[RMDB]
RNA sequence: GGGAACGACUCGAGUAGAGUCGAAAAGAUGAGAAUACGUGACUUGGUCAGAGGCGGAAAGACACAAGCACGAACGAUUCAGUAGAGUAUCGAACCGCCAACAGAUGCACGUUGUGAUCGUGCUAGAGAGUGGUAUGGUGUUCGCACCAUACCACUCAAAAGAAACAACAACAACAAC
Reactivity to 2A3 in 0.01 (KOAc 150mM, MgCl2 10mM, bicine 150mM(pH8.5), 24C), signal-to-noise 2, nucleotides 027 to 126: g100a060u150g020a000g040a190a000u150a090c010g000u000g060a090c000u000u000g020g020u000c040a080g000a080g150g000c000g000g100a210a060a000g030a000c040a000c000a110a000g010c000a000c010g050a140a020c000g000a000u070u100c060a010g100u230a130g000a000g010u110a020u300c160g040a000a010c000c000g000c020c000a000a000c020a000g110a030u080g010c000a000c000g000u020u070g060u080g020a090u300c040g000u010g000c000u060a000g030a000
Reactivity to DMS in 0.01 (KOAc 150mM, MgCl2 10mM, bicine 150mM(pH8.5), 24C), signal-to-noise 1, nucleotides 027 to 126: g000a070u010g000a090g000a070a040u010a280c010g000u000g000a070c000u000u000g010g000u000c000a070g040a260g000g000c020g000g000a160a030a070g080a000c000a000c030a040a040g020c000a000c000g010a220a150c090g000a050u090u010c000a170g000u070a120g110a130g000u030a020u010c140g000a160a080c030c000g000c060c000a300a190c110a130g010a170u000g000c000a000c040g000u020u000g040u030g000a160u070c080g000u000g000c000u000a030g030a240

This 177-nucleotide RNA was probed chemically with 2A3 and DMS.
Source: RMDB library OK1LIB, as collected in RNAgym.